[RMDB]
RNA sequence: GGGAACGACUCGAGUAGAGUCGAAAAUAUUACAUCUUCGGAUGUAAUAACUGGUGGUGGCUGGCUUGUUCCUAGUGGCGCAACUGUUGCCAUGACUGCGCAAUCGCUCUGAAUUCGUUCAGAGCAACGUAAAUAAUGUAUUCGUACAUUAUUUACGAAAAGAAACAACAACAACAAC
Reactivity to 2A3 in 0.01 (KOAc 150mM, MgCl2 10mM, bicine 150mM(pH8.5), 24C), signal-to-noise 9, nucleotides 027 to 126: u040a000u000u000a000c000a000u000c000u030u040c210g120g000a000u000g000u000a000a000u010a020a040c060u070g050g000u030g010g030u020g030g000c040u020g030g010c030u050u100g020u030u020c000c000u020a040g050u030g110g000c010g000c020a050a070c070u100g090u170u090g020c020c010a030u060g070a080c060u040g000c030g000c040a020a070u120c110g000c000u000c000u000g020a020a020u100u080c210g070u060u010c010a000g000a010g000c000a000a000
Reactivity to DMS in 0.01 (KOAc 150mM, MgCl2 10mM, bicine 150mM(pH8.5), 24C), signal-to-noise 9, nucleotides 027 to 126: u000a010u000u000a000c000a000u000c000u000u010c210g020g000a010u000g010u000a000a000u000a030a130c120u000g010g030u000g000g020u000g000g010c030u000g010g010c080u000u000g010u000u000c010c010u000a070g020u000g010g010c020g010c040a080a180c100u000g010u000u000g010c040c050a060u000g010a100c090u000g010c050g020c080a130a100u010c160g000c000u000c000u000g000a020a030u000u010c180g010u000u000c000a000g000a010g010c000a030a030